[RMDB]
RNA sequence: GGGAACGACUCGAGUAGAGUCGAAAAGGGCGUCAUUUCGAUGACGCCCAUACGUCUACUCCGAUUGGCGAGGAGGACGCCGACGGGCGCGUUUGCCAAUCGCACCGUCCAGAUUCGUCUGGACGAAUAUAUUCGCACACUUCGGUGUGCGAAUAUAAAAAGAAACAACAACAACAAC
Reactivity to 2A3 in 0.01 (KOAc 150mM, MgCl2 10mM, bicine 150mM(pH8.5), 24C), signal-to-noise 1, nucleotides 027 to 126: g030g000g000c020g020u020c020a020u040u060u090c190g090a030u040g000a000c000g010c000c000c000a000u000a000c010g060u000c010u010a020c000u000c010c020g020a010u030u010g010g000c020g000a010g140g110a110g080g210a070c000g000c010c020g270a300c160g140g040g000c000g030c000g000u000u040u050g020c030c000a040a030u010c000g020c020a040c010c020g000u000c000c000a010g000a000u020u050c110g050u010c110u030g000g000a000c000g000a000a000
Reactivity to DMS in 0.01 (KOAc 150mM, MgCl2 10mM, bicine 150mM(pH8.5), 24C), signal-to-noise 1, nucleotides 027 to 126: g000g000g000c040g000u000c020a030u000u000u000c140g040a050u000g020a020c020g000c000c000c000a000u010a010c260g020u000c000u000a060c010u000c010c020g020a000u000u000g010g020c010g030a030g000g000a150g000g020a160c020g010c000c010g050a230c300g000g000g030c020g020c000g000u000u000u000g000c010c020a000a000u000c000g020c170a090c220c000g000u020c000c010a000g000a050u000u000c220g020u010c000u000g030g000a000c000g010a020a040